[RMDB]
RNA sequence: GGGAACGACUCGAGUAGAGUCGAAAACUAGCCGUCAUGGGAUGGGAGGCUCUCGGGGGCCCUGCCUCACGAUAACAUACACAGGGCCAGCUUCCUGGGUCUGGGACCUGCACAGUCGCACAGGGCCCAGGGAGGGUGAGUUCGCUCACCCUCCCUGAAAAGAAACAACAACAACAAC
Reactivity to DMS in 0.01 (KOAc 150mM, MgCl2 10mM, bicine 150mM(pH8.5), 24C), signal-to-noise 2, nucleotides 027 to 126: c060u010a080g000c050c030g000u010c100a110u010g020g010g000a100u020g010g010g000a130g000g030c040u000c040u020c090g030g020g000g020g010c010c010c010u010g000c060c050u010c110a070c190g000a090u000a110a100c140a100u000a130c180a100c000a010g000g000g000c000c010a100g010c090u000u010c010c010u010g000g000g010u000c020u010g000g010g010a060c010c010u000g020c120a070c190a140g000u000c050g000c110a160c070a040g010g020g010c000c020
Reactivity to 2A3 in 0.01 (KOAc 150mM, MgCl2 10mM, bicine 150mM(pH8.5), 24C), signal-to-noise 1, nucleotides 027 to 126: c010u020a000g090c000c000g120u120c060a100u170g000g000g110a040u030g030g050g020a020g000g010c020u040c000u040c080g140g000g000g030g040c020c010c010u020g010c000c040u090c040a070c040g110a120u090a260a090c060a060u280a040c040a030c010a060g000g030g000c020c000a020g000c000u060u050c040c040u020g020g000g030u000c020u010g100g000g060a110c020c020u110g040c070a040c000a130g090u090c020g070c040a060c000a080g060g000g050c020c010